An RNA of 207 nucleotides, treated with 2A3 and read out base by base.
It was measured as part of the RMDB library RNAMAK.
Conditions: 150 mM KOAc, 10 mM MgCl2 and 150 mM bicine (pH 8.5), 24 C.
For 2A3, 792 sequencing reads were counted.
RNA sequence: GGGAACGACUCGAGUAGAGUCGAAAAGCGUACUACUCGAGGCAGAUGGAGAGUAUAUUUUGACUAUCCCAAAUAGGAUAGUCAUUUAUACUCGUUGAAAUCUGCUCCCCACCGAGUAUCGCAAAGUAUGUAGUUAGGUUCGCCUAACUACAUACAACUUUCGAUCAGGGUUCGCCCUGAUCGAAAGAAAAGAAACAACAACAACAAC
Reactivity to 2A3 in 0.01 (KOAc 150mM, MgCl2 10mM, bicine 150mM(pH8.5), 24C), signal-to-noise 1, nucleotides 027 to 156: g060c060g060u100a090c000u000a000c000u020c000g010a000g000g060c000a000g000a000u010g010g010a010g010a000g030u000a000u000a010u000u060u020u040g000a000c000u000a000u040c000c010c010a110a300a080u270a060g000g000a000u000a000g000u010c000a030u000u000u000a000u000a030c020u000c000g010u050u030g020a000a000a000u000c000u000g030c000u100c010c070c000c000a110c020c080g000a040g040u070a090u300c010g000c090a050a060a000g000u000a020u020g020u000a000g000u020u030a010g010g010u040u060c130g160c020c000u000a000a000c000u000a000c000a000u000a010c000a000a020